[RMDB]
RNA sequence: GGGAACGACUCGAGUAGAGUCGAAAAACUGCCAUACGUGGUAGAAACACGCCUUACCAGGACUAAACAGCGUGUCUAAAAAACAGUCCUUCAUACCUGAUCUGGAGGGUAGAUCAGGAAUACUAAAAAAAUCGGGUGAAGUUCGCUUCACCCGAAACCAACAAUGUGAGUUCGCUCACAUUGUUGGAAAAGAAACAACAACAACAAC
Reactivity to 2A3 in 0.01 (KOAc 150mM, MgCl2 10mM, bicine 150mM(pH8.5), 24C), signal-to-noise 4, nucleotides 027 to 156: a000c000u000g010c000c000a040u050a080c200g060u030g000g000u010a010g020a030a040a000c000a000c000g010c000c000u020u060a020c020c050a010g000g000a000c000u030a090a070a020c010a010g000c000g010u010g000u040c100u030a020a020a010a000a000a000c020a010g000u000c030c000u010u090c060a090u080a160c000c000u000g000a000u000c000u020g040g070a080g070g060g040u070a010g010a010u010c020a000g030g060a000a020u110a050c110u150a010a010a000a030a000a020a130u030c010g000g010g000u000g000a000a010g020u050u110c140g040c090u010u000c000a000c000c000c000g000a000a000a000
Reactivity to DMS in 0.01 (KOAc 150mM, MgCl2 10mM, bicine 150mM(pH8.5), 24C), signal-to-noise 1, nucleotides 027 to 156: a090c040u000g000c010c010a000u000a090c130g060u010g040g070u000a010g040a260a150a010c010a040c020g030c010c050u010u030a060c040c050a060g040g040a040c000u000a030a040a060c020a040g000c030g010u000g010u000c090u000a000a000a030a110a010a020c060a070g000u020c000c010u010u000c020a180u000a090c000c000u000g000a000u000c000u010g060g030a070g040g040g010u000a010g000a020u000c000a010g010g050a010a050u010a240c080u000a000a020a080a080a100a110a110u010c020g000g040g000u000g000a030a000g060u000u000c300g020c000u000u000c040a010c010c040c000g000a030a010a040